RNA sequence: GGGAACGACUCGAGUAGAGUCGAAAAAUGACAGAGAACGAACAAACACACGAAGCACAACUGGGCGGACAUCUCGCCAAAGCCAUGCAGGGACAGAUGGAGAUGAUGAUGUCCCACGGCAAACACGGCUCGAAAUCAGAGAUGAUGGAAGAAAUGGGCAAAGUUCGGAUUUCGAUCCGAACUUUGCAAAAGAAACAACAACAACAAC
Reactivity to 2A3 in 0.01 (KOAc 150mM, MgCl2 10mM, bicine 150mM(pH8.5), 24C), signal-to-noise 1, nucleotides 027 to 156: a010u030g000a040c030a000g080a020g000a110a010c030g050a050a010c020a140a010a010c120a030c010a000c110g030a000a040g060c020a000c010a070a030c030u050g000g050g080c010g040g060a010c020a040u030c100u030c100g010c000c020a000a100a000g040c030c000a030u150g060c040a060g000g050g000a000c000a000g040a040u140g090g060a020g040a060u240g030a060u050g010a000u000g040u010c000c000c010a030c080g050g000c000a000a000a000c050a040c070g030g000c050u050c070g110a070a030a030u130c010a010g040a000g000a110u030g010a030u050g000g020a000a020g040a000a200a050u050g000g090